[RMDB]
RNA sequence: GGGAACGACUCGAGUAGAGUCGAAAAGGCUCAGCUGGCGCAUUAUCUACAGCGCAGAGGGAGUAAGAUGAUGCGGAAAAGAAAAUCUCUGCGAAAGAGCCGCACACUAAAUGUGUGUGAAAAGAAAGGGAAUACUAUAGUUCGCUAUAGUAUUCCCAAAAGAAACAACAACAACAAC
Reactivity to DMS in 0.01 (KOAc 150mM, MgCl2 10mM, bicine 150mM(pH8.5), 24C), signal-to-noise 5, nucleotides 027 to 126: g000g020c000u000c000a170g010c050u010g010g010c020g020c000a000u000u010a020u010c000u020a050c050a100g010c060g000c000a020g000a030g000g010g000a200g030u010a080a060g020a030u000g000a010u000g000c040g020g010a080a060a120a130g010a110a050a110a220u040c000u000c000u000g010c020g030a120a110a090g000a050g020c080c010g010c000a000c000a000c010u020a060a080a100u050g010u010g010u000g010u010g010a040a040a090a090g020a090a110a130
Reactivity to 2A3 in 0.01 (KOAc 150mM, MgCl2 10mM, bicine 150mM(pH8.5), 24C), signal-to-noise 9, nucleotides 027 to 126: g020g010c010u010c020a020g010c050u090g070g000c010g000c010a010u010u010a010u020c020u050a060c030a050g060c050g020c100a020g020a030g040g060g010a110g050u070a130a040g010a010u030g000a000u020g010c020g090g090a110a150a050a020g150a020a100a010a030u030c010u000c000u010g020c020g020a050a100a010g040a010g030c040c000g000c000a000c000a000c010u110a130a160a280u260g000u000g000u010g000u030g050a070a110a030a050g110a040a040a050